[RMDB]
RNA sequence: GGGAACGACUCGAGUAGAGUCGAAAAAGUGGUCUUCGUUUGAGGACAUCUUUGCAUAGAUAUUGGUCUCGUGAGGAAGCAAGGACUUUACAAAGUCCUCAAAUGACUGGCCAUAUCUUUGCUUGAAACGCCUGAGGUAGUUCGCUACCUCAGGCGUAAAAGAAACAACAACAACAAC
Reactivity to 2A3 in 0.01 (KOAc 150mM, MgCl2 10mM, bicine 150mM(pH8.5), 24C), signal-to-noise 2, nucleotides 027 to 126: a000g020u020g020g070u040c000u000u000c100g200u050u000u300g000a000g020g000a000c000a060u060c030u010u040u050g000c000a010u090a060g080a000u030a030u130u250g160g030u010c030u060c150g090u240g060a170g150g000a160a110g110c110a060a040g080g000a010c050u170u070u110a140c100a080a130a000g000u000c000c020u020c040a040a010a050u000g100a000c070u010g000g000c000c000a040u000a000u000c000u030u150u000g110c040u050u050g110a180a120

The data come from the RNA Mapping Database (RMDB), library OK1LIB.
The record gives the reactivity of an RNA of 177 nucleotides to 2A3.
The RNA was probed in 150 mM KOAc, 10 mM MgCl2 and 150 mM bicine (pH 8.5) at 24 C.
The 2A3 profile rests on 590 reads.